An RNA of 177 nucleotides, treated with 2A3 and DMS and read out base by base. High DMS reactivity at an A or C suggests that its Watson-Crick edge is free. The data come from the RNA Mapping Database (RMDB), libraries RFM100 and RFMREP. For DMS the reverse transcriptase was MarathonRT.
RNA sequence: GGGAACGACUCGAGUAGAGUCGAAAAAACCCGCAAAAUAAGGGUUCACGAGCCGAAAGGCGGGCCUAGCGAACCACCCUGGCCUUUUGGUGAGGCCGGGUGACGACAGAAAAGCUACCCCAGGGAUUCGUAUGAAGAAAUUCGUUUCUUCAUACGAAAAAGAAACAACAACAACAAC
Reactivity to 2A3 in 0.01 (KOAc 150mM, MgCl2 10mM, bicine 150mM(pH8.5), 24C), signal-to-noise 8, nucleotides 027 to 126: a000a020c070c010c000g030c050a240a250a010a020u190a070a040g070g000g000u070u030c050a040c170g070a030g040c000c000g050a050a030a000g020g010c000g000g000g000c000c020u020a020g010c010g030a020a010c030c000a010c010c010c050u100g010g000c000c000u030u030u050u120g300g030u300g020a000g000g000c000c000g000g000g000u000g010a010c030g010a010c000a020g150a040a110a010a010g010c010u020a030c000c000c010c020a030g050g050g070a080u020
Reactivity to DMS in 0.01 (KOAc 150mM, MgCl2 10mM, bicine 150mM(pH8.5), 24C), signal-to-noise 5, nucleotides 027 to 126: a100a090c000c010c000g020c220a060a060a070a070u030a080a100g010g010g020u010u010c090a090c140g000a150g020c010c010g010a140a110a130g000g010c010g010g000g020c070c050u000a060g020c020g030a120a080c120c010a030c010c010c000u040g070g000c010c010u000u000u010u060g010g020u040g010a000g000g010c010c000g000g000g020u000g000a030c100g010a080c120a050g000a110a070a090a110g000c050u000a070c040c000c000c010a100g010g000g000a180u010